[RMDB]
RNA sequence: GGGAACGACUCGAGUAGAGUCGAAAAAUGGAGAAGAGGAUCAUUUGAGUCCAGUAGUUUGAGACUAGCCUGGGCAAUAUAGGGAGACCCCAUCUCCAAAAAAAUAAUUAAAAGGCAGUCUGUGAUCAUUCAUCGAAGGAUUCGUCCUUCGAUGAAUAAAAGAAACAACAACAACAAC
Reactivity to DMS in 0.01 (KOAc 150mM, MgCl2 10mM, bicine 150mM(pH8.5), 24C), signal-to-noise 1, nucleotides 027 to 126: a100u000g000g010a060g000a040a090g010a080g010g010a300u000c010a080u010u020u000g020a080g030u000c000c000a030g000u000a030g000u000u030u000g030a190g010a020c020u000a040g020c250c010u000g000g030g030c040a000a150u020a220u010a030g010g000g000a090g010a090c020c000c030c010a150u000c000u000c000c010a000a000a050a130a110a070a110u010a030a040u000u010a010a080a080a070g000g000c030a040g020u000c040u000g010u000g000a040u000c120

The record gives the reactivity of an RNA of 177 nucleotides to DMS. For DMS the reverse transcriptase was MarathonRT. Conditions: 150 mM KOAc, 10 mM MgCl2 and 150 mM bicine (pH 8.5), 24 C. For DMS, 656 sequencing reads were counted.